The data come from the RNA Mapping Database (RMDB), libraries RFM100 and RFMREP. Structure probing data (2A3 and DMS) for a 177-nucleotide construct.
[RMDB]
RNA sequence: GGGAACGACUCGAGUAGAGUCGAAAAGGUGGAGACACGCUGUACACCGGGAAUGCAUCGAACUCGCGUUUAAGCGGUCUGUAAGGCCGUCGGCGUCCUGGGGAAGGGUCACGGAAGUGACCCUUCUGAAUGUGUACACUUUCGAGUGUACACAUUCAAAAGAAACAACAACAACAAC
Reactivity to 2A3 in 0.01 (KOAc 150mM, MgCl2 10mM, bicine 150mM(pH8.5), 24C), signal-to-noise 9, nucleotides 027 to 126: g070g000u040g030g050a050g010a030c040a020c060g070c060u050g050u120a040c030a040c050c010g000g000g010a130a080u120g020c040a100u080c070g020a040a040c020u030c100g040c040g030u020u030u050a070a010g020c000g000g020u000c020u040g300u170a080a090g010g000c010c000g010u030c020g020g000c020g010u010c000c010u040g000g010g030g000a000a000g000g000g000u000c000a000c010g060g130a130a090g010u000g000a000c000c000c000u000u000c000u000
Reactivity to DMS in 0.01 (KOAc 150mM, MgCl2 10mM, bicine 150mM(pH8.5), 24C), signal-to-noise 9, nucleotides 027 to 126: g000g030u000g000g000a150g010a120c060a050c050g010c050u010g000u000a110c110a100c020c010g000g000g010a060a060u020g020c050a140u030c050g000a060a040c050u010c170g000c210g010u010u000u010a070a140g000c000g000g010u000c010u000g010u010a050a050g000g000c010c000g000u000c030g010g010c020g000u010c010c010u000g000g010g010g000a010a010g000g010g000u000c000a000c000g010g070a120a120g000u010g000a010c000c000c000u000u000c010u000
The reactions ran in a buffer of 150 mM KOAc, 10 mM MgCl2 and 150 mM bicine (pH 8.5), at 24 C. As a SHAPE reagent, 2A3 marks flexible, mostly unpaired nucleotides at the ribose 2'-OH.